RNA sequence: GGGAACGACUCGAGUAGAGUCGAAAAUCUGGGUACUAGGUAUUGUGAAGGCUGACUCGGUCUACAAUACCUUAUCCAUAGACUACUUGUAGACUAGACCGAGUUAGCCUUUAGUCAUGAGUGGUCACUACUGCUUUCUAUUCGUAGAAAGCAGUAGAAAAGAAACAACAACAACAAC
Reactivity to 2A3 in 0.01 (KOAc 150mM, MgCl2 10mM, bicine 150mM(pH8.5), 24C), signal-to-noise 2, nucleotides 027 to 126: u010c020u010g040g000g070u040a070c050u050a050g010g050u050a020u060u110g040u030g040a000a010g030g000c020u010g000a050c010u020c010g030g030u000c000u000a000c040a010a020u020a040c080c010u010u000a010u010c010c000a030u110a060g060a040c030u050a030c010u120u070g010u040a040g000a020c010u010a000g010a020c000c000g000a020g010u010u010a000g000c000c000u010u020u010a000g010u020c010a010u060g020a010g060u050g050g030u040c030a000
Reactivity to DMS in 0.01 (KOAc 150mM, MgCl2 10mM, bicine 150mM(pH8.5), 24C), signal-to-noise 8, nucleotides 027 to 126: u010c030u000g000g010g010u000a020c080u000a050g010g020u000a050u000u010g010u000g000a030a020g000g010c000u000g010a040c020u000c000g010g000u000c000u000a010c020a030a140u000a060c030c100u000u010a020u020c130c160a100u010a060g010a110c130u000a040c150u000u000g010u000a030g010a280c290u000a030g010a020c000c010g000a020g010u000u000a030g010c000c000u000u000u000a020g010u010c040a040u000g000a090g010u000g000g000u000c070a290